An RNA of 177 nucleotides, treated with DMS and 2A3 and read out base by base.
Conditions: 150 mM KOAc, 10 mM MgCl2 and 150 mM bicine (pH 8.5), 24 C.
Source: RMDB library OK1LIB, as collected in RNAgym.
As a SHAPE reagent, 2A3 marks flexible, mostly unpaired nucleotides at the ribose 2'-OH.
RNA sequence: GGGAACGACUCGAGUAGAGUCGAAAAGAAUAUAAGAGCGCAGUAAAUGUGAGAGCAAACUGCGCCCGGACUGUAGGAUCCGGUGGCACAGCAACGCUCAUUCACAACACGCUGUGCCACGUGAAGACGUCAGCAUGAGGUUCGCCUCAUGCUGACGAAAAGAAACAACAACAACAAC
Reactivity to DMS in 0.01 (KOAc 150mM, MgCl2 10mM, bicine 150mM(pH8.5), 24C), signal-to-noise 1, nucleotides 027 to 126: g080a050a020u000a190u000a030a000g000a050g080c030g050c000a000g000u000a020a020a110u000g000u000g080a140g010a040g000c000a040a010a060c000u000g000c110g000c000c000c000g040g000a130c130u020g000u030a100g000g000a180u000c000c000g000g000u000g000g030c090a030c000a000g010c000a280a100c300g060c100u000c280a010u100u040c250a000c050a280a050c300a140c070g020c000u000g050u000g000c000c000a000c100g000u090g000a040a090g000a150
Reactivity to 2A3 in 0.01 (KOAc 150mM, MgCl2 10mM, bicine 150mM(pH8.5), 24C), signal-to-noise 2, nucleotides 027 to 126: g000a000a020u300a010u030a070a000g000a000g030c030g010c010a000g030u030a000a140a000u030g000u000g030a090g000a000g040c000a050a050a060c000u000g000c000g000c000c000c000g010g000a020c020u160g130u290a050g060g040a060u010c000c000g000g000u100g000g030c000a000c000a020g020c000a050a130c050g040c030u020c010a070u190u210c140a090c000a240a000c020a070c100g000c020u000g000u000g000c000c010a020c040g140u170g110a100a090g120a010